The record gives the reactivity of an RNA of 207 nucleotides to 2A3.
RNA sequence: GGGAACGACUCGAGUAGAGUCGAAAAGCGUACUACCGAGGAACCGUAGGAUGGACCGAACACUAUUGGACCGUCCCAAAUAGGACGGUCAGGGUGUUUAGGACGAAGCCUACUCAGUACUCGGUAUCGCAAACCGUGUUCGUUCGCGAACACGGAACAUCGGGGACUGGUUCGCCAGUCCCCGAUGAAAAGAAACAACAACAACAAC
Reactivity to 2A3 in 0.01 (KOAc 150mM, MgCl2 10mM, bicine 150mM(pH8.5), 24C), signal-to-noise 1, nucleotides 027 to 156: g010c000g020u140a100c100u000a010c010c000g040a010g020g000a000a000c000c000g000u020a010g040g010a170u110g000g050a100c000c030g000a000a010c000a000c000u200a300u160u150g100g020a000c010c000g000u020c020c000c000a150a300a150u300a120g000g000a000c010g000g000u000c000a000g000g000g000u000g000u000u010u110a300g000g000a040c060g050a170a020g050c000c000u010a010c000u000c000a000g000u000a000c020u010c020g010g020u010a000u030c000g040c020a030a030a030c010c000g010u000g010u010u000c000g010u020u040c240g000c000g050a000a000c000a000c000g000g000a000a020
Annotation:
The 2A3 profile rests on 835 reads. The data come from the RNA Mapping Database (RMDB), library RNAMAK. Values are in units of 0.01, from 0 to 300, in steps of 10. The RNA was probed in 150 mM KOAc, 10 mM MgCl2 and 150 mM bicine (pH 8.5) at 24 C.